RNA sequence: GGGAACGACUCGAGUAGAGUCGAAAAAUGGUGGCGCCGUGCGGACCUAUAGAGCCAGGGGUGUCGGGUGGGGCCACGCCACCGGUGACAGCAUCGUCCGAGCAAGUGGUUCCUGCCGCGAUGCUGGUCUACGGAGCGCCUUCGGGCGCUUCGUAGGAAAAGAAACAACAACAACAAC
Reactivity to 2A3 in 0.01 (KOAc 150mM, MgCl2 10mM, bicine 150mM(pH8.5), 24C), signal-to-noise 7, nucleotides 027 to 126: a010u120g000g000u010g000g000c020g000c050c030g020u050g020c030g000g020a050c000c010u040a060u090a150g100a030g050c030c030a040g010g020g010g040u200g130u170c040g020g010g030u160g010g020g010g020c010c010a010c020g000c010c000a030c000c000g020g010u060g030a030c020a000g020c000a020u010c000g030u030c040c060g030a040g030c010a080a020g050u050g060g000u080u080c010c000u010g010c000c000g010c000g000a000u000g000c000u000g000g020
Reactivity to DMS in 0.01 (KOAc 150mM, MgCl2 10mM, bicine 150mM(pH8.5), 24C), signal-to-noise 7, nucleotides 027 to 126: a050u020g000g020u000g000g020c030g010c080c050g020u010g010c130g010g010a100c050c040u020a150u020a070g010a130g010c060c040a120g020g000g000g010u020g010u020c060g010g000g010u020g000g000g000g010c020c070a120c010g000c020c020a030c020c000g000g010u020g000a100c030a040g000c050a080u000c030g000u000c110c060g010a140g000c030a080a110g020u010g010g000u000u020c020c020u000g000c000c010g000c010g000a010u000g010c000u000g000g000